[RMDB]
Background: Source: RMDB library RSTRND, as collected in RNAgym. An RNA of 207 nucleotides, treated with 2A3 and read out base by base. The 2A3 profile rests on 1,844 reads. Conditions: 150 mM KOAc, 10 mM MgCl2 and 150 mM bicine (pH 8.5), 24 C.
RNA sequence: GGGAACGACUCGAGUAGAGUCGAAAAGUCCAUGCUCGCGGUGUAGAGUCACUAUCAUGGAAUCGCGCUGGGUGGCUGCCUGUCAGUCCGGCACUAGAACACAACAGGCUGGUUCCCGGAUGCGCUUUGCACGCCGUGCUGUUCGGGGACGAGAUCCGCGAUUCUAUAGGUUCGCCUAUAGAAUCGCAAAAGAAACAACAACAACAAC
Reactivity to 2A3 in 0.01 (KOAc 150mM, MgCl2 10mM, bicine 150mM(pH8.5), 24C), signal-to-noise 2, nucleotides 027 to 156: g040u000c000c000a010u030g020c050u100c120g090c130g030g020u060g030u100a120g030a110g200u120c020a020c040u030a040u050c000a030u050g050g000a040a030u090c080g000c010g000c060u040g010g000g020u030g010g000c000u010g000c000c000u000g010u010c020a010g020u020c000c010g000g020c030a040c050u130a070g090a270a040c100a000c020a120a010c000a000g000g000c000u040g060g020u000u000c000c000c000g000g010a000u020g000c030g020c090u090u110u150g140c070a060c110g130c070c040g040u030g020c040u110g000u030u020c000g000g020g000g000a000c000g000a010g000a030u090c090c070